Structure probing data (2A3) for a 207-nucleotide construct.
Source: RMDB library RNAMAK, as collected in RNAgym.
The RNA was probed in 150 mM KOAc, 10 mM MgCl2 and 150 mM bicine (pH 8.5) at 24 C.
For 2A3, 2,601 sequencing reads were counted.
[RMDB]
RNA sequence: GGGAACGACUCGAGUAGAGUCGAAAAGCGUACUACUACAGCUUUUGACGGAGCACUGGUGGGAGUUCGCUCCCAAAUAGGAGCGAACGCGAAACCACCAAGUGCUCCGAUAAGCUGUAGUAUCGCAAAGCCAUGGUACGUUCGCGUACCAUGGCAAGAGAUGUAUGCGGUUCGCCGCAUACAUCUCAAAAGAAACAACAACAACAAC
Reactivity to 2A3 in 0.01 (KOAc 150mM, MgCl2 10mM, bicine 150mM(pH8.5), 24C), signal-to-noise 3, nucleotides 027 to 156: g000c020g020u060a050c040u000a000c000u010a000c020a010g020c000u080u080u040u120g220a100c000g000g000a000g000c020a010c030u020g000g000u000g000g010g020a210g030u010u000c020g010c020u070c000c020c030a250a300a070u300a060g000g000a000g000c000g000a020a000c000g010c030g040a050a010a010c000c000a020c000c000a000a000g000u000g000c000u000c000c000g000a000u000a000a000g000c000u010g000u000a000g000u000a000u000c000g050c010a090a140a020g010c000c000a000u000g000g000u000a000c010g020u050u070c240g000c000g160u000a010c030c010a000u000g000g000c000a000a000